[RMDB]
RNA sequence: GGGAACGACUCGAGUAGAGUCGAAAACAAAUUGUAACAGUGGGUUGAUUUUCCUGGUGAAUCCCGGCCUUGUCCUCCGUCACAAGUGUGACAAGUGUCUCGAAAACGUGUUCGCUAUACCCACGUUACCUGAAUCUUAUUUCGAUAAGAUUCAGGUAAAAGAAACAACAACAACAAC
Reactivity to 2A3 in 0.01 (KOAc 150mM, MgCl2 10mM, bicine 150mM(pH8.5), 24C), signal-to-noise 9, nucleotides 027 to 126: c040a010a090a080u210u210g070u100a050a030c050a070g000u010g010g020g020u030u050g080a190u070u090u070u060c010c020u040g010g020u020g020a030a030u050c040c030c000g000g000c000c000u010u010g000u000c010c000u010c010c010g080u060c030a040c010a120a070g030u030g060u100g090a000c000a010a010g080u080g050u120c060u060c110g090a070a060a040a050c070g040u050g020u090u010c010g000c010u030a020u040a080c000c000c000a010c010g000u010u000
Reactivity to DMS in 0.01 (KOAc 150mM, MgCl2 10mM, bicine 150mM(pH8.5), 24C), signal-to-noise 6, nucleotides 027 to 126: c140a080a090a130u010u010g010u020a050a060c060a070g030u000g000g000g000u000u010g000a120u010u010u010u000c020c040u020g020g020u010g000a060a040u000c070c070c110g020g010c010c000u000u000g000u000c000c000u000c010c040g010u010c300a110c150a110a170g000u000g010u020g010a010c010a010a010g000u010g010u030c020u010c130g010a110a030a070a120c180g010u020g010u010u000c030g010c020u000a080u010a030c010c000c000a020c030g000u000u000